[RMDB]
The record gives the reactivity of an RNA of 177 nucleotides to DMS and 2A3.

RNA sequence: GGGAACGACUCGAGUAGAGUCGAAAAAAAAUCCCAGUGUUAUUGGUGUUUAUCAUAAACUUGGAGAACGUGUACGCCAAGCUAUCUUAAACACUGUUAAAUUUUGUGACCACAUGGUCAAGGCUGGCCUUUAUAUACCCUUCGGGGUAUAUAAAGGAAAAGAAACAACAACAACAAC
Reactivity to DMS in 0.01 (KOAc 150mM, MgCl2 10mM, bicine 150mM(pH8.5), 24C), signal-to-noise 4, nucleotides 027 to 126: a070a070a090a080u010c030c000c000a140g030u000g000u000u000a030u010u000g010g010u000g000u000u000u000a000u000c080a020u000a020a070a120c010u000u000g000g000a090g020a100a100c220g020u000g010u010a120c100g000c010c000a000a000g020c090u000a030u000c050u000u000a000a010a010c000a010c010u000g000u000u000a030a050a130u000u010u010u020g030u010g000a020c000c010a210c250a090u010g010g010u000c010a040a050g000g010c100u000g000g000
Reactivity to 2A3 in 0.01 (KOAc 150mM, MgCl2 10mM, bicine 150mM(pH8.5), 24C), signal-to-noise 2, nucleotides 027 to 126: a000a000a000a000u060c050c000c010a040g030u080g020u100u060a080u020u220g030g010u010g010u050u040u010a050u000c020a010u060a080a090a080c000u020u020g000g010a070g040a230a020c040g060u150g050u180a040c030g000c000c000a000a000g020c010u000a010u030c000u010u020a010a000a000c000a000c000u010g000u070u090a060a120a140u160u200u190u150g070u040g030a010c000c010a070c070a290u300g000g000u030c010a010a000g090g020c100u050g030g030

DMS adducts were read by reverse transcription with MarathonRT. It was measured as part of the RMDB library 15KREP. The 2A3 profile rests on 1,051 reads.